Chemical mapping of a 207-nucleotide RNA with 2A3. Reactivities are given for positions 27 through 156. The reactions ran in a buffer of 150 mM KOAc, 10 mM MgCl2 and 150 mM bicine (pH 8.5), at 24 C.

RNA sequence: GGGAACGACUCGAGUAGAGUCGAAAAGAAUCACCGUACCUAUUUAGGUUUACGCUCGAAGAUCGGUGGAUAGCAGCCCUAUCAAUAUCUAGGAGAACUGUGCUAUGUUUAGAAGAUUAGGUAGUCUAUUACACAGCCAUGUUCGCAUGGCUGUGAAGUUGUCAUUGAGCUUCGGCUCAAUGACAACAAAAGAAACAACAACAACAAC
Reactivity to 2A3 in 0.01 (KOAc 150mM, MgCl2 10mM, bicine 150mM(pH8.5), 24C), signal-to-noise 1, nucleotides 027 to 156: g030a020a000u080c000a000c000c000g010u060a090c000c030u070a170u180u180u290a130g000g040u050u180u210a060c060g060c000u110c070g030a060a000g010a020u020c000g070g000u110g030g000a030u040a000g010c020a000g000c000c000c000u110a110u060c060a120a000u090a030u190c010u130a060g020g070a060g080a050a090c040u040g000u010g060c060u030a000u040g020u000u160u000a110g040a120a050g000a080u090u070a020g000g070u030a000g060u070c040u070a090u080u080a050c000a000c010a000g020c000c050a000u000g000u000u000c100g000c060a000u000g000g000c000u000g000u000g000a000a000